[RMDB]
RNA sequence: GGGAACGACUCGAGUAGAGUCGAAAACAGCAGCUCCAUCAUGUCACGAUGGCGGAUAUGCUUCAUCAGCAGCGUCAGUGCGGCCAUCCGGCGAUGGUUCAUGAUUUCAUUGUCAUCAACGACAGUGCUGGUUCGGUGAGUUCGCUCACCGAACCAGAAAAGAAACAACAACAACAAC
Reactivity to DMS in 0.01 (KOAc 150mM, MgCl2 10mM, bicine 150mM(pH8.5), 24C), signal-to-noise 1, nucleotides 027 to 126: c080a130g010c060a070g000c070u000c030c020a050u000c040a060u000g020u020c140a150c130g000a040u000g010g010c020g040g010a100u000a050u000g000c000u020u000c170a120u000c170a070g000c040a020g000c070g020u000c140a110g020u020g020c040g030g000c010c060a000u000c020c110g050g010c040g000a050u010g000g000u000u000c080a030u000g020a130u000u000u000c080a060u000u000g010u000c020a070u010c190a030a160c130g020a020c000a020g020u000g020
Reactivity to 2A3 in 0.01 (KOAc 150mM, MgCl2 10mM, bicine 150mM(pH8.5), 24C), signal-to-noise 1, nucleotides 027 to 126: c010a020g110c030a000g020c000u000c000c000a010u050c020a020u250g040u050c010a010c130g010a020u040g020g000c010g050g000a050u090a030u130g020c000u070u000c030a300u030c040a030g000c000a000g000c000g060u010c080a060g000u140g200c040g070g000c000c010a000u020c040c020g060g060c080g010a000u020g030g000u020u050c050a110u140g170a060u050u080u120c010a010u000u060g030u000c000a070u040c080a100a040c050g030a010c020a030g030u000g000
Structure probing data (DMS and 2A3) for a 177-nucleotide construct. It was measured as part of the RMDB library OK2TST. 2A3 is a SHAPE reagent: it acylates the 2'-hydroxyl of flexible nucleotides of all four kinds. The reactions ran in a buffer of 150 mM KOAc, 10 mM MgCl2 and 150 mM bicine (pH 8.5), at 24 C. DMS adducts were read by reverse transcription with MarathonRT. 2A3 adducts were read by reverse transcription with SuperScript II with manganese.